[RMDB]
RNA sequence: GGGAACGACUCGAGUAGAGUCGAAAAAACCGUAAAUUCGUUUACGGUUAACCGCAACCCAGCCGAAAGGCAUUUUAUGCGUACGGUGGCGAAAGCCUAAAAUACCAUAGGCCUUCGGGCCUAUGAAUCUGCUACACUAUUUCGAUAGUGUAGCAGAAAAAGAAACAACAACAACAAC
Reactivity to 2A3 in 0.01 (KOAc 150mM, MgCl2 10mM, bicine 150mM(pH8.5), 24C), signal-to-noise 1, nucleotides 027 to 126: a010a000c020c000g010u040a060a020a010u090u050c140g070u150u000u000a000c020g000g020u000u000a010a020c050c020g020c050a020a070c000c040c000a010g000c000c010g120a220a050a020g070g020c000a000u020u070u000u070a090u060g030c030g010u030a040c060g090g050u060g020g000c000g040a080a010a000g010c000c000u020a070a080a020a020u130a050c080c000a000u000a000g010g000c010c000u020u050c230g040g000g000c010c000u010a000u000g020a000a040
Reactivity to DMS in 0.01 (KOAc 150mM, MgCl2 10mM, bicine 150mM(pH8.5), 24C), signal-to-noise 2, nucleotides 027 to 126: a020a000c000c000g000u000a000a000a020u000u030c190g000u000u000u000a000c000g000g000u000u000a020a070c120c030g020c040a050a050c000c000c000a260g000c010c000g000a080a130a170g020g000c000a030u000u010u000u000a020u010g010c020g000u000a140c080g010g030u000g000g020c000g000a080a070a090g000c000c000u030a050a030a030a080u000a090c210c000a000u000a000g010g000c000c020u000u010c150g010g010g020c000c000u000a000u000g000a060a060

The record gives the reactivity of an RNA of 177 nucleotides to 2A3 and DMS. DMS adducts were read by reverse transcription with MarathonRT. For 2A3 the reverse transcriptase was SuperScript II with manganese. Conditions: 150 mM KOAc, 10 mM MgCl2 and 150 mM bicine (pH 8.5), 24 C. The DMS profile rests on 1,377 reads. For 2A3, 1,407 sequencing reads were counted. Source: RMDB library M2PK50, as collected in RNAgym. Values are in units of 0.01, from 0 to 300, in steps of 10.